Notes
Structure probing data (2A3) for a 207-nucleotide construct. Reactivities are given for positions 27 through 156. High 2A3 reactivity points to a flexible backbone, as in loops and unpaired stretches.

RNA sequence: GGGAACGACUCGAGUAGAGUCGAAAACUCGUAGAUGUAGGGUCAUUAUCACGGAACCGCCGGUAGUGGCUGCCUGUCAGCUAUCGGUUAGAUCAAGCAGGCUGGUUUUCAGGUGCGCUUUGCCCGCCGUGCUGCCUGGGAACGAGAUCUAACGGAGCCUAUUGGCUCGGUUCGCCGAGCCAAUAGGAAAAGAAACAACAACAACAAC
Reactivity to 2A3 in 0.01 (KOAc 150mM, MgCl2 10mM, bicine 150mM(pH8.5), 24C), signal-to-noise 1, nucleotides 027 to 156: c000u030c040g070u090a070g010a080u060g040u090a030g030g000g110u030c010a030u000u140a060u060c080a030c160g080g020a070a110c080c020g000c020c030g020g030u030a040g000u040g030g020c020u030g030c020c000u060g010u100c080a030g000c010u040a020u030c000g060g000u000u060a030g000a060u110c080a050a010g070c020a000g000g000c000u020g070g020u000u000u060u020c030a010g030g010u030g030c150g040c070u060u180u210g010c020c060c000g040c050c000g040u060g010c030u100g010c010c030u030g000g000g000a030a000c010g000a000g000a040u000c010u040a000a010c030g070g010a020g000